[RMDB]
The record gives the reactivity of an RNA of 177 nucleotides to 2A3 and DMS.
Values cover nucleotides 27 to 126.
For 2A3 the reverse transcriptase was SuperScript II with manganese.
RNA sequence: GGGAACGACUCGAGUAGAGUCGAAAACGCGCAGGGAUGUUUUCGAAUCUAUGUUUAUGCUCUCCCUUUGACAGAUUCACUGUUACGAGCAUGGAUUCGCAUAGAUAGGCGUCUCAAAGGGAGCGCGUAAUGGUAUGGUGUUCGCACCAUACCAUUAAAAAGAAACAACAACAACAAC
Reactivity to 2A3 in 0.01 (KOAc 150mM, MgCl2 10mM, bicine 150mM(pH8.5), 24C), signal-to-noise 3, nucleotides 027 to 126: c030g020c010g010c050a080g070g000g000a050u030g030u020u070u120u150c020g040a050a070u030c010u010a030u040g090u040u120u030a050u060g010c010u000c000u040c030c030c000u050u050u070g020a010c020a010g020a080u180u150c090a080c240u030g010u040u090a060c070g010a010g000c030a030u050g040g050a150u140u120c050g000c030a030u020a030g040a010u030a020g040g010c010g020u000c010u010c040a030a030a010g090g010g030a080g000c010g000c000g020
Reactivity to DMS in 0.01 (KOAc 150mM, MgCl2 10mM, bicine 150mM(pH8.5), 24C), signal-to-noise 7, nucleotides 027 to 126: c020g030c040g020c030a160g010g000g000a040u000g010u000u000u010u000c070g000a090a040u000c000u000a020u000g000u000u010u000a040u010g000c030u010c020u010c090c070c080u010u000u000g010a040c080a050g000a280u010u010c190a130c030u000g010u000u000a110c220g000a030g000c010a050u000g000g010a110u000u010c160g020c110a040u010a050g000a040u010a090g010g000c070g020u010c020u000c000a040a070a090g010g010g010a100g010c040g000c000g020